[RMDB]
RNA sequence: GGGAACGACUCGAGUAGAGUCGAAAAGGUCGGUGUUUCGACACCGACCACUUACCGAGAAAGUUCCUCGGUAUAUAAAACAAACCCUUGGAAACAAGGGAAUACGAAUCGUGUUCGCACGAUUCAAUAGCUAUAAACCUUUCGAGGUUUAUAGCUAAAAAGAAACAACAACAACAAC
Reactivity to DMS in 0.01 (KOAc 150mM, MgCl2 10mM, bicine 150mM(pH8.5), 24C), signal-to-noise 3, nucleotides 027 to 126: g020g020u010c010g040g030u000g010u000u000u000c160g020a100c000a010c000c010g000a000c010c000a020c050u000u000a010c000c000g020a020g010a080a130a150g020u010u010c030c000u000c010g030g000u010a010u010a050u000a060a070a080a100c130a090a100a110c000c000c000u000u010g000g000a150a070a200c010a000a010g000g000g020a060a010u010a070c160g000a020a000u000c000g020u000g010u000u020c250g040c010a000c030g000a010u010u000c000a080a100
Reactivity to 2A3 in 0.01 (KOAc 150mM, MgCl2 10mM, bicine 150mM(pH8.5), 24C), signal-to-noise 2, nucleotides 027 to 126: g010g000u010c020g000g010u010g000u020u060u100c130g040a010c010a000c010c010g000a010c000c000a000c000u000u010a010c010c000g020a000g010a050a230a010g100u100u080c000c000u000c010g000g010u010a030u010a020u020a100a080a010a020c080a030a110a130c010c000c010u000u000g000g020a040a030a020c000a000a000g010g010g000a010a010u060a040c060g010a000a000u000c000g000u010g050u040u040c200g000c060a000c000g000a010u010u000c000a000a050